[RMDB]
RNA sequence: GGGAACGACUCGAGUAGAGUCGAAAAAGAGGACCUGAGCCGAGAAGACUUUUGCCCCAGAGACCUCGAGUUUCGGGGAGUUUCAGGAAGCCCUGUGAUUCGAUCUGAGCGGUGGGGACGUGUGUCACUGCAUUAGUGGUUUCGACCACUAAUGCAGAAAAGAAACAACAACAACAAC
Reactivity to 2A3 in 0.01 (KOAc 150mM, MgCl2 10mM, bicine 150mM(pH8.5), 24C), signal-to-noise 4, nucleotides 027 to 126: a000g120a050g030g050a030c020c050u060g010a010g020c010c020g100a060g020a160a020g040a070c010u090u130u150u150g030c010c000c000c020a020g010a010g010a050c030c050u130c140g040a120g050u040u060u000c010g010g000g070g020a050g030u040u150u130c030a040g000g050a040a030g020c000c000c000u030g010u010g020a040u020u050c030g030a080u050c030u070g030a010g040c050g000g060u050g040g010g000g030a040c050g090u140g000u000g030u060c040a010
Reactivity to DMS in 0.01 (KOAc 150mM, MgCl2 10mM, bicine 150mM(pH8.5), 24C), signal-to-noise 3, nucleotides 027 to 126: a100g000a120g010g020a100c020c050u020g000a070g030c040c040g020a070g010a060a060g000a060c040u000u020u040u000g010c080c020c020c050a180g010a040g010a060c040c050u040c130g000a120g010u000u030u010c010g000g000g000g000a020g020u010u000u000c110a080g000g000a150a100g000c030c000c040u010g010u000g000a060u000u010c020g010a050u020c050u000g000a180g030c020g000g000u030g000g000g020g020a050c050g010u010g000u000g010u030c080a160
Source information: The record gives the reactivity of an RNA of 177 nucleotides to 2A3 and DMS. For 2A3 the reverse transcriptase was SuperScript II with manganese. DMS adducts were read by reverse transcription with MarathonRT. The RNA was probed in 150 mM KOAc, 10 mM MgCl2 and 150 mM bicine (pH 8.5) at 24 C. The data come from the RNA Mapping Database (RMDB), library OK1LIB. The 2A3 profile rests on 2,776 reads.